Chemical mapping of a 207-nucleotide RNA with 2A3.

RNA sequence: GGGAACGACUCGAGUAGAGUCGAAAACUUCAAGGUCGAUCGUGAUUUCGGUUCCUUUCUUGAACAGACCCUUUUCAUGAGUUGAGUCGCGCUGAACAACAACCACAUCAAUUUGCGUUUCCAUCUUCGUUUCCUCUGUAUCGUGUCGAUGAAAAGACUUUAGAGGGUGCUUCGGCACCCUCUAAAGAAAAGAAACAACAACAACAAC
Reactivity to 2A3 in 0.01 (KOAc 150mM, MgCl2 10mM, bicine 150mM(pH8.5), 24C), signal-to-noise 1, nucleotides 027 to 156: c040u130u110c090a080a040g040g030u030c030g090a100u050c040g070u050g110a190u080u090u090c000g020g000u040u060c030c030u070u090u010c070u040u130g070a020a010c030a000g070a050c000c000c000u070u090u090u110c110a110u150g060a050g070u030u020g060a060g030u070c000g000c010g000c140u030g020a060a000c000a010a020c020a010a020c000c060a040c020a120u100c060a090a180u000u030u140g030c030g050u000u030u030c030c020a020u020c020u050u000c020g050u020u000u090c010c010u030c040u080g010u030a090u160c050g020u040g120u100c030g070a000u100g060a040a090a000a080g020a010

Conditions: 150 mM KOAc, 10 mM MgCl2 and 150 mM bicine (pH 8.5), 24 C. The 2A3 profile rests on 619 reads. The data come from the RNA Mapping Database (RMDB), library OK3TST.